[RMDB]
RNA sequence: GGGAACGACUCGAGUAGAGUCGAAAAACUCAAUGCAUGUGGACAAAUGGGUGUUAAAGCGAUUGCAUUGACGGUUGGGCAUACCAAUGACCCACCUGCACUCAAAGAAUAGGCCGUGGACCCAGUCGAGGGAUUACCACUUCGGUGGUAAUCCCUCAAAAGAAACAACAACAACAAC
Reactivity to 2A3 in 0.01 (KOAc 150mM, MgCl2 10mM, bicine 150mM(pH8.5), 24C), signal-to-noise 2, nucleotides 027 to 126: a000c000u000c000a010a000u070g000c000a000u070g070u130g080g150a180c040a000a160a160u180g210g000g050u090g030u190u150a070a030a030g120c020g040a200u110u060g020c020a090u000u210g060a000c000g060g000u040u080g030g000g040c000a000u120a130c020c000a140a090u130g070a220c000c000c020a040c000c030u030g000c060a080c030u080c000a120a100a000g100a040a070u100a060g060g030c060c030g030u000g000g000a020c000c000c010a030g130u100c150
Reactivity to DMS in 0.01 (KOAc 150mM, MgCl2 10mM, bicine 150mM(pH8.5), 24C), signal-to-noise 1, nucleotides 027 to 126: a070c110u000c000a040a000u000g000c060a060u010g010u000g100g190a010c120a040a000a070u020g000g000g000u000g050u050u050a000a000a140g100c280g030a130u020u000g000c010a020u000u040g000a000c100g070g000u010u050g000g000g000c050a020u000a100c230c120a030a000u000g020a200c070c000c000a260c060c000u000g010c000a020c080u000c000a170a060a210g000a050a060u000a130g040g060c000c000g040u000g000g000a010c050c080c040a170g060u050c140